[RMDB]
RNA sequence: GGGAACGACUCGAGUAGAGUCGAAAAUUGGGGUCACUGUGUAAAGGUACUACAGAGCUACGACCAUGUGAUAGGCGGGGAGCUGGACCCUCUCACCACCUAGGUAGUGUUGAAGGUCGCGAGGGAGGAUUAAGCGAAAGUUCGCUUUCGCUUAAUCAAAAGAAACAACAACAACAAC
Reactivity to DMS in 0.01 (KOAc 150mM, MgCl2 10mM, bicine 150mM(pH8.5), 24C), signal-to-noise 1, nucleotides 027 to 126: u010u000g000g000g010g020u010c030a120c020u010g020u010g010u000a060a100a130g010g020u010a060c070u010a070c120a050g000a090g010c110u010a060c110g000a070c030c020a070u010g020u000g010a110u010a080g000g000c100g030g000g000g000a090g010c120u000g000g000a040c020c010c020u000c010u000c010a010c010c020a030c020c050u020a090g020g020u000a020g020u000g000u010u000g000a030a030g010g010u000c020g020c070g020a090g010g010g010a100g000
Reactivity to 2A3 in 0.01 (KOAc 150mM, MgCl2 10mM, bicine 150mM(pH8.5), 24C), signal-to-noise 1, nucleotides 027 to 126: u060u070g030g000g000g000u050c050a020c070u050g010u010g060u180a080a080a130g190g010u050a050c030u030a030c060a060g120a010g020c030u040a040c080g050a030c040c030a030u130g040u020g070a090u050a120g040g000c050g020g000g000g000a040g030c010u050g030g000a020c020c030c000u000c000u000c000a000c030c010a020c000c020u030a100g140g030u040a020g000u000g070u100u060g030a090a040g000g000u010c020g030c020g080a070g030g020g000a040g040